[RMDB]
RNA sequence: GGGAACGACUCGAGUAGAGUCGAAAAGAUAUGGAAUCAUGACAGCUUUUGACGACGCUACAUCGGAAACGAUGUAGACGUCGAUAAGCUGCAUGAUUCCUAAGUCAAAGAGCUGUUCGCAGCUCAACAAUUUAGGUAGCUUCGGCUACCUAAAUUGAAAAGAAACAACAACAACAAC
Reactivity to 2A3 in 0.01 (KOAc 150mM, MgCl2 10mM, bicine 150mM(pH8.5), 24C), signal-to-noise 6, nucleotides 027 to 126: g020a020u060a050u170g000g000a000a000u000c000a000u050g150a300c000a020g000c030u120u140u250u300g270a170c030g000a000c020g000c030u000a000c010a010u010c000g020g030a070a030a040c020g000a000u000g010u000a000g000a010c000g000u000c000g000a000u000a000a030g000c000u000g000c000a010u000g000a000u000u000c000c000u000a010a010g010u000c020a080a110a150g000a010g010c010u020g040u160u180c300g000c200a000g000c000u010c000a010a040
Reactivity to DMS in 0.01 (KOAc 150mM, MgCl2 10mM, bicine 150mM(pH8.5), 24C), signal-to-noise 6, nucleotides 027 to 126: g010a020u010a300u010g000g000a010a010u000c000a000u010g000a240c000a000g010c010u000u000u000u010g010a240c060g000a030c030g010c000u000a010c000a000u000c000g000g000a150a090a200c010g010a020u000g010u000a000g010a080c010g010u000c010g010a050u010a020a020g020c000u000g010c000a010u010g000a010u000u000c000c000u000a010a070g010u000c040a110a120a150g000a020g010c010u000g000u010u020c280g030c000a020g000c010u000c010a090a190
The record gives the reactivity of an RNA of 177 nucleotides to 2A3 and DMS. The DMS profile rests on 10,849 reads. For 2A3, 13,995 sequencing reads were counted. For 2A3 the reverse transcriptase was SuperScript II with manganese. It was measured as part of the RMDB library TTRDES. For DMS the reverse transcriptase was MarathonRT.